[RMDB]
RNA sequence: GGGAACGACUCGAGUAGAGUCGAAAAGAUAUGGAAUGGCGAAACAGAGCGAUAGUGGCGUUUGACGAUGCUCGGAAACGAGCAUCCGAGCCAUGAUUCGCGACGAAGUUUCGCCAUUCCUAAGUCACUAUGAAUGGACGUUCGCGUCCAUUCAUAGAAAAGAAACAACAACAACAAC
Reactivity to DMS in 0.01 (KOAc 150mM, MgCl2 10mM, bicine 150mM(pH8.5), 24C), signal-to-noise 3, nucleotides 027 to 126: g000a070u000a300u010g020g010a010a020u000g000g020c010g000a020a010a010c020a020g000a280g010c000g010a030u010a140g010u000g010g000c010g020u000u010u010g030a170c300g000a010u000g020c000u010c000g010g000a100a070a240c010g010a000g020c000a000u000c000c000g000a090g000c000c010a000u000g010a210u010u000c000g000c020g000a170c260g010a100a040g000u010u010u000c010g010c000c000a000u000u000c010c010u010a030a100g010u000c020a220